[RMDB]
An RNA of 207 nucleotides, treated with 2A3 and read out base by base. The 2A3 profile rests on 775 reads. Values are in units of 0.01, from 0 to 300, in steps of 10. Source: RMDB library RNAMAK, as collected in RNAgym.

RNA sequence: GGGAACGACUCGAGUAGAGUCGAAAAUAAGGUUCGCCUUACUGAGUACCUUUGUGAGACGGGAGUCCGUGAACUACUGCCGUAGACACCCAUUGGGUGUUGAAGGCAGCACGGACGUUGAUCGUCUCACUCUGGUCCGCCCACCCUUCGGGGUGAACUCCAAUUGCCUUUUCGAAGGCAAUUGGAGAAAAGAAACAACAACAACAAC
Reactivity to 2A3 in 0.01 (KOAc 150mM, MgCl2 10mM, bicine 150mM(pH8.5), 24C), signal-to-noise 1, nucleotides 027 to 156: u100a030a000g040g000u040u060c120g160c020c000u010u010a080c120u130g120a010g090u070a000c000c000u000u020u010g000u010g000a000g000a000c000g010g010g000a020g000u000c000c030g010u000g020a100a060c000u200a090c010u300g020c000c000g010u000a000g000a000c000a000c010c000c030a250u190u300g010g000g000u030g010u000u030g080a080a030g000g000c000a000g020c000a000c000g000g000a000c000g000u020u000g000a000u000c000g020u060c010u000c000a000c000u000c000u000g020g000u030c000c000g000c000c000c000a000c010c000c000u070u090c230g010g000g060g000u030g040a010a000